The data come from the RNA Mapping Database (RMDB), library OK2TRN. Structure probing data (DMS and 2A3) for a 177-nucleotide construct. For DMS, 640 sequencing reads were counted. In probing experiments dimethyl sulfate is read out at A N1 and C N3, which are open when not base-paired. The reactions ran in a buffer of 150 mM KOAc, 10 mM MgCl2 and 150 mM bicine (pH 8.5), at 24 C. For 2A3 the reverse transcriptase was SuperScript II with manganese.
[RMDB]
RNA sequence: GGGAACGACUCGAGUAGAGUCGAAAAGAUGUCGAGCAUCACCCUCACGUCCUGGAUGUCGGGCACGUUCUCGAGGACCACCUCUUCGUCGGUGAGGAGACAGGCGGCGAUACAGGGGAGUGCUGCGGGGUACGAAGGAUUUCGAUCCUUCGUACCCAAAAGAAACAACAACAACAAC
Reactivity to DMS in 0.01 (KOAc 150mM, MgCl2 10mM, bicine 150mM(pH8.5), 24C), signal-to-noise 1, nucleotides 027 to 126: g000a100u010g020u010c130g000a070g030c010a030u040c160a180c060c010c010u000c030a140c110g000u010c000c020u000g010g010a050u010g000u000c000g010g010g070c110a120c120g000u000u000c040u000c000g000a130g010g010a140c060c110a060c130c000u000c060u000u010c040g030u000c120g000g040u000g030a180g010g000a150g010a200c180a040g000g000c120g040g000c100g000a150u000a130c150a130g040g000g030g020a120g000u000g010c040u010g000c000g040
Reactivity to 2A3 in 0.01 (KOAc 150mM, MgCl2 10mM, bicine 150mM(pH8.5), 24C), signal-to-noise 1, nucleotides 027 to 126: g070a050u140g050u260c170g050a030g010c040a020u060c070a170c000c000c010u000c020a050c010g040u000c000c060u060g020g060a060u130g050u050c030g000g030g000c120a050c230g070u210u030c030u010c010g000a040g070g130a010c110c000a060c030c000u050c000u120u050c040g160u120c130g040g090u190g010a000g000g040a000g070a040c030a040g190g030c030g000g000c040g000a010u000a220c120a060g000g000g000g020a080g020u060g040c050u030g060c060g060